RNA sequence: GGGAACGACUCGAGUAGAGUCGAAAAAAAAGAUAUGGAGGCUUAGAGCGCUUGGAUUUAUACAGGAUAGUAUAUCGGAAACGAUAUACUACUGUAUUGUCAGCGUGAUAAGCCUCCUAAGUCAAAACAUAUGUUGAAGGUUCGCCUUCAACAUAUGAAAAGAAACAACAACAACAAC
Reactivity to DMS in 0.01 (KOAc 150mM, MgCl2 10mM, bicine 150mM(pH8.5), 24C), signal-to-noise 5, nucleotides 027 to 126: a090a060a110a080g010a050u000a300u010g000g000a020g010g010c000u010u000a010g000a300g010c000g000c000u010u010g030g010a030u000u010u000a000u000a010c010a000g000g010a230u000a010g010u000a000u000a010u000c000g010g000a100a070a210c010g010a020u000a000u000a000c000u000a020c000u000g000u000a000u000u000g000u000c020a030g000c000g000u010g000a210u000a000a000g010c000c000u000c000c000u000a010a060g000u000c020a120a080a100a200
Reactivity to 2A3 in 0.01 (KOAc 150mM, MgCl2 10mM, bicine 150mM(pH8.5), 24C), signal-to-noise 1, nucleotides 027 to 126: a020a000a010a020g050a030u050a010u120g010g030a010g010g000c010u020u000a000g000a020g030c050g000c050u130u200g120g000a030u250u300u090a000u010a000c000a000g040g010a030u030a020g000u010a000u000a000u010c000g020g000a070a070a030c000g000a000u000a000u000a010c020u010a000c000u010g010u010a010u000u010g010u020c010a000g030c000g000u000g000a010u000a000a000g000c000c000u010c000c000u010a000a010g010u000c010a000a010a070a040
The record gives the reactivity of an RNA of 177 nucleotides to DMS and 2A3. The RNA was probed in 150 mM KOAc, 10 mM MgCl2 and 150 mM bicine (pH 8.5) at 24 C. DMS adducts were read by reverse transcription with MarathonRT. For 2A3, 4,470 sequencing reads were counted.